[RMDB]
The record gives the reactivity of an RNA of 207 nucleotides to DMS and 2A3. For 2A3 the reverse transcriptase was SuperScript II with manganese. Reactivities are given for positions 27 through 156. The reactions ran in a buffer of 150 mM KOAc, 10 mM MgCl2 and 150 mM bicine (pH 8.5), at 24 C. DMS (dimethyl sulfate) methylates the pairing face of unpaired adenines and cytosines.
RNA sequence: GGGAACGACUCGAGUAGAGUCGAAAAGAUAAGCUAGCAGCAAAAAGGAACUGAUUCCCACCAAGUUCGGAAAGAGAUACCGGGCGAGGCGCUGAAGAAAGAAUCUCGCUUCAGACACCCCAAGGACAUGACCUUAAAAUGUUCGCAUUUUAAGGAACGUUGUUAUGAGAUUCGUCUCAUAACAACGAAAAGAAACAACAACAACAAC
Reactivity to DMS in 0.01 (KOAc 150mM, MgCl2 10mM, bicine 150mM(pH8.5), 24C), signal-to-noise 3, nucleotides 027 to 156: g000a120u000a070a120g050c040u000a100g020c050a100g000c040a020a070a090a090a090g000g000a030a150c040u010g000a200u000u000c020c000c030a170c050c050a130a220g020u010u020c020g020g000a080a050a080g000a130g000a120u000a080c020c010g020g020g010c030g000a180g010g020c050g040c020u010g000a020a060g010a080a080a100g010a120a090u000c050u000c050g020c030u010u010c010a040g010a280c020a050c000c020c000c010a040a100g020g000a050c060a090u000g000a140c000c010u000u000a010a010a020a010u000g020u000u000c300g040c010a000u020u000u000u000a010a030g020g000a050a070
Reactivity to 2A3 in 0.01 (KOAc 150mM, MgCl2 10mM, bicine 150mM(pH8.5), 24C), signal-to-noise 5, nucleotides 027 to 156: g030a060u100a080a040g030c040u070a020g030c060a010g010c040a010a030a060a110a050g080g010a060a020c040u050g020a110u050u010c020c000c000a000c020c020a040a020g020u030u030c000g020g020a120a100a020g110a050g010a040u050a090c010c000g000g010g000c020g020a020g030g030c080g000c050u050g010a020a020g030a040a240a010g040a080a110u050c070u040c110g020c000u020u020c010a040g030a070c020a090c020c030c000c030a040a050g060g000a030c040a120u110g080a070c000c000u000u010a000a000a000a000u010g010u040u060c150g000c080a000u000u000u000u010a000a000g000g000a030a040